[RMDB]
The record gives the reactivity of an RNA of 177 nucleotides to 2A3 and DMS. For DMS the reverse transcriptase was MarathonRT. Conditions: 150 mM KOAc, 10 mM MgCl2 and 150 mM bicine (pH 8.5), 24 C.
RNA sequence: GGGAACGACUCGAGUAGAGUCGAAAAUCGUUUACCGCGACUUUCCAGUGAAUGGAUCAACCUGUUGAUGCAGGUAGUGUGUAUCAUGCGAAUCGUUCUGCGAUUCGUAACUGCAGGUUGCUCCGGUUCCUUAGCCUAUGUUCGCAUAGGCUAAGGAAAAAGAAACAACAACAACAAC
Reactivity to 2A3 in 0.01 (KOAc 150mM, MgCl2 10mM, bicine 150mM(pH8.5), 24C), signal-to-noise 5, nucleotides 027 to 126: u020c000g000u030u060u090a080c030c030g010c000g000a010c000u030u020u030c010c010a060g060u070g280a090a120u170g010g000a000u000c000a000a000c000c000u010g010u030u040g010a010u000g010c010a020g070g140u140a100g130u170g010u000g000u070a000u020c000a010u010g000c000g000a000a000u000c000g010u100u110c090u300g050c000g000a000u000u000c010g010u000a010a020c020u090g000c000a000g000g000u000u000g000c010u010c000c000g020g020u010
Reactivity to DMS in 0.01 (KOAc 150mM, MgCl2 10mM, bicine 150mM(pH8.5), 24C), signal-to-noise 2, nucleotides 027 to 126: u000c000g000u010u000u040a050c260c270g030c000g030a010c040u010u010u000c000c030a200g000u010g000a120a080u020g010g000a010u000c030a000a010c010c010u030g000u010u000g000a010u000g010c000a020g000g010u030a070g030u030g050u000g040u000a010u000c010a180u000g000c000g000a000a000u000c000g010u000u010c250u040g010c020g010a040u000u000c010g030u010a020a180c300u030g000c000a000g000g010u010u010g000c100u000c000c000g000g020u000